[RMDB]
RNA sequence: GGGAACGACUCGAGUAGAGUCGAAAAGGACGAGUAGAACCCAACCCGUGCAUCACGAAAUGGGAACAACUCGUAGGCGUGUUGUUCGCAUUUCGGAGAGAUCUGGGUUGCGAAGGGUACGCCAUGACUAGUCGGAAGUAUUCGUACUUUCGACUAGAAAAGAAACAACAACAACAAC
Reactivity to 2A3 in 0.01 (KOAc 150mM, MgCl2 10mM, bicine 150mM(pH8.5), 24C), signal-to-noise 9, nucleotides 027 to 126: g050g010a020c050g020a040g060u090a040g060a100a050c010c010c010a000a010c010c000c000g020u040g020c030a060u020c010a020c050g010a010a010a010u080g030g070g000a010a000c010a010a000c000u040c060g060u110a250g150g280c170g010u020g000u000u010g010u000u000c080g020c200a000u000u010u010c000g000g000a110g000a000g000a010u030c040u120g000g000g000u000u020g000c020g040a060a030g010g000g020u050a020c020g000c020c010a090u110g060a050
Reactivity to DMS in 0.01 (KOAc 150mM, MgCl2 10mM, bicine 150mM(pH8.5), 24C), signal-to-noise 9, nucleotides 027 to 126: g010g000a070c050g010a110g010u000a070g010a100a170c040c040c010a040a030c030c010c000g010u000g010c300a100u000c010a090c000g000a000a010a020u000g000g000g010a010a020c000a010a010c000u000c010g010u010a120g010g020c090g010u000g000u000u000g000u000u000c000g000c000a010u000u000u000c000g010g000a090g000a100g000a060u000c020u010g010g000g000u000u000g010c130g000a100a120g000g010g010u000a050c050g010c020c050a080u010g000a230